Conditions: 150 mM KOAc, 10 mM MgCl2 and 150 mM bicine (pH 8.5), 24 C. Chemical mapping of a 170-nucleotide RNA with DMS and 2A3. The 2A3 profile rests on 13,544 reads.
[RMDB]
RNA sequence: GGGAACGACUCGAGUAGAGUCGAAAAUUAACAACCUUCAUCGCGGGCAAGUGUUAGGGCACAUUGCUGCGACUGUUAGAUUGCAAGCUGGUUCUAACACCGAGUUUGCCUCUAAUUCCUCGGUGUUCAACCUACGGCUUCGGCCGUAGGAAAAGAAACAACAACAACAAC
Reactivity to DMS in 0.01 (KOAc 150mM, MgCl2 10mM, bicine 150mM(pH8.5), 24C), signal-to-noise 3, nucleotides 027 to 129: u080u040a080a140c140a010a000c060c020u040u000c100a000u010c060g030c110g000g030g020c050a050a040g050u040g000u000u000a110g030g040g060c040a040c030a100u020u050g030c020u040g040c000g040a060c130u010g030u000u000a040g000a100u000u000g020c000a040a060g020c070u020g020g040u020u040c080u000a000a000c020a010c010c030g010a020g000u030u020u020g020c100c050u000c050u040a090a000u000u000c120c010u020c010g000g020u030g030u060u020c300a060a060
Reactivity to 2A3 in 0.01 (KOAc 150mM, MgCl2 10mM, bicine 150mM(pH8.5), 24C), signal-to-noise 6, nucleotides 027 to 129: u100u080a050a010c050a010a050c020c000u090u100c030a040u020c010g000c020g020g010g020c020a040a000g030u010g040u100u090a110g050g090g000c040a060c050a210u020u060g000c000u010g010c020g020a000c020u010g040u040u010a060g020a210u040u180g010c030a060a020g000c040u050g010g050u060u020c030u120a000a010c040a000c030c000g010a020g010u000u090u070g050c010c020u040c030u040a050a090u100u050c010c000u020c000g000g000u030g020u030u040c010a040a030
For DMS the reverse transcriptase was MarathonRT.